[RMDB]
RNA sequence: GGGAACGACUCGAGUAGAGUCGAAAAUCGGCCUUCGUCCAACUUUCGGUAUAGGUCGACGUAGGUCGACACGACCUUGUCGUCCAACCCGUCGAACGUCGGUUGUUGCAAGCCAUGUAUGCGGUACCAAAGGUUGACCUUUCGAGGUCAACCUUUGAAAAGAAACAACAACAACAAC
Reactivity to DMS in 0.01 (KOAc 150mM, MgCl2 10mM, bicine 150mM(pH8.5), 24C), signal-to-noise 2, nucleotides 027 to 126: u010c040g040g000c020c040u000u010c010g040u020c040c040a060a090c130u000u010u000c060g000g000u000a090u010a270g000g010u000c090g000a000c020g010u000a030g010g050u000c010g000a160c200a080c080g000a010c010c020u010u000g020u000c010g000u000c000c000a140a140c160c040c070g000u010c050g030a000a030c080g020u000c050g000g020u000u000g020u000u000g000c080a050a090g020c090c050a050u000g000u000a050u000g000c060g030g020u000a100c140
An RNA of 177 nucleotides, treated with DMS and read out base by base. The RNA was probed in 150 mM KOAc, 10 mM MgCl2 and 150 mM bicine (pH 8.5) at 24 C. It was measured as part of the RMDB library OK2TST. For DMS the reverse transcriptase was MarathonRT. For DMS, 1,798 sequencing reads were counted.